[RMDB]
RNA sequence: GGGAACGACUCGAGUAGAGUCGAAAAUGCAUACUACCCUCCACUUUUCAGCACUUCUCUUAAUUUGUGGUUUGUCUGUUCAUUGUCCAGAGUGGGCUGUGGAAGCCCAGGCAUCCAUGUGAAAGCUAGUGUGUGUGAAGAUGCCCUCUAUGUAGCACUAGGACGAUAGGUUCGCCUAUCGUCCUAGAAAAGAAACAACAACAACAAC
Reactivity to 2A3 in 0.01 (KOAc 150mM, MgCl2 10mM, bicine 150mM(pH8.5), 24C), signal-to-noise 2, nucleotides 027 to 156: u050g040c040a030u050a180c050u080a050c020c000c000u010c000c030a040c010u050u050u040u030c020a020g000c020a030c070u140u020c020u000c000u030u150a170a150u140u170u140g030u010g010g030u050u060u050g020u030c010u020g060u060u030c000a040u100u050g000u000c020c010a030g030a040g230u140g020g020g010c010u010g030u020g100g120a060a020g010c000c080c000a000g000g030c000a010u010c000c020a090u050g030u030g120a080a060a000g000c070u090a050g000u010g000u030g000u000g020u010g090a050a000g030a040u070g030c000c060c000u040c010u030a130u230g080u080a020g040c040a000
Reactivity to DMS in 0.01 (KOAc 150mM, MgCl2 10mM, bicine 150mM(pH8.5), 24C), signal-to-noise 2, nucleotides 027 to 156: u000g020c070a120u000a100c050u000a140c010c010c030u000c020c040a230c040u010u000u010u000c020a090g000c030a070c040u010u000c020u000c050u010u010a080a100u000u010u020g010u010g000g040u000u010u000g020u010c030u030g010u000u000c030a110u000u000g010u020c020c040a120g000a050g050u000g050g080g030c000u000g030u000g020g020a130a060g050c040c040c010a010g020g010c020a060u000c020c040a080u020g020u000g010a080a030a130g010c020u000a070g020u000g020u010g020u020g030u010g000a070a050g010a100u000g030c030c010c020u000c060u010a100u000g000u010a090g040c070a200